[RMDB]
Structure probing data (DMS and 2A3) for a 207-nucleotide construct.
Conditions: 150 mM KOAc, 10 mM MgCl2 and 150 mM bicine (pH 8.5), 24 C.
Source: RMDB library OK3TST, as collected in RNAgym.
As a SHAPE reagent, 2A3 marks flexible, mostly unpaired nucleotides at the ribose 2'-OH.
DMS adducts were read by reverse transcription with MarathonRT.
RNA sequence: GGGAACGACUCGAGUAGAGUCGAAAAUAAGAGGUUACUGUUAUUUCUAAUUACUACAAGAAUUCUUGCUUCUUGGUGCAUAAGAUCUACUGUGGGGAAUAGUACAAGUGCUGACCAUCUGACUUUAGAGCUGAACAGUUUGGGACUUGAUCUCAGCUCAAGUUAAGAGAUUCGUCUCUUAACUUGAAAAAGAAACAACAACAACAAC
Reactivity to DMS in 0.01 (KOAc 150mM, MgCl2 10mM, bicine 150mM(pH8.5), 24C), signal-to-noise 3, nucleotides 027 to 156: u000a090a120g010a140g020g010u000u000a050c040u010g020u000u000a050u000u000u000c020u010a090a100u010u000a100c030u000a070c030a040a040g010a100a100u000u010c050u000u010g010c100u000u000c030u000u010g010g000u000g010c060a120u000a070a100g020a050u000c050u010a030c040u010g030u010g010g010g000g000a080a050u000a060g010u010a080c050a060a080g040u000g000c050u000g020a100c030c020a060u000c050u010g010a070c060u000u000u000a100g000a080g000c040u000g010a050a080c050a050g000u000u000u010g010g030g010a070c040u000u000g020a130u000c040u000c020a050g030c070
Reactivity to 2A3 in 0.01 (KOAc 150mM, MgCl2 10mM, bicine 150mM(pH8.5), 24C), signal-to-noise 9, nucleotides 027 to 156: u170a040a020g030a040g030g020u040u070a040c030u040g050u080u050a110u050u100u030c040u060a130a150u190u110a110c050u050a060c040a070a030g050a080a050u110u070c040u080u120g060c020u030u030c010u040u060g060g000u050g000c010a040u040a160a040g010a070u020c020u070a070c030u070g020u080g020g000g000g040a040a050u050a090g050u040a030c030a110a040g030u020g050c030u030g030a040c010c010a040u050c030u050g050a070c020u080u110u100a060g010a010g050c020u020g020a080a030c010a040g010u050u110u100g050g000g020a020c010u040u080g070a090u080c030u010c050a010g010c010